[RMDB]
RNA sequence: GGGAACGACUCGAGUAGAGUCGAAAAAGUGAAGGACGCCGAAGUGUUCAAACUUCUGAAACUCAUGUCAUGGACAAGAAAGAACGACCUCACAGAUCACAUGUAUGAGUGGUCAAAGGAGGAUCCUGAUGCAAUCAAAUUUGGCAGGCUCGUCAGCGUUAGUACCCGAUUUCGAUCGGGUACUAACAAAAGAAACAACAACAACAAC
Reactivity to 2A3 in 0.01 (KOAc 150mM, MgCl2 10mM, bicine 150mM(pH8.5), 24C), signal-to-noise 2, nucleotides 027 to 156: a000g060u080g070a070a010g020g010a020c020g040c020c010g020a010a030g010u030g010u110u080c060a090a110a110c000u030u000c020u030g070a110a020a010c020u000c030a030u120g110u060c000a050u100g020g030a030c070a100a090g020a100a080a020g050a110a040c080g060a020c050c000u020c000a080c010a010g050a030u030c000a020c020a050u070g130u210a090u150g070a030g030u000g030g030u000c000a090a000a060g090g000a010g010g010a010u020c000c000u060g050a040u090g070c060a040a030u000c030a030a040a150u130u050u010g000g000c010a000g000g020c010u010c010g100u050c040a020g000c030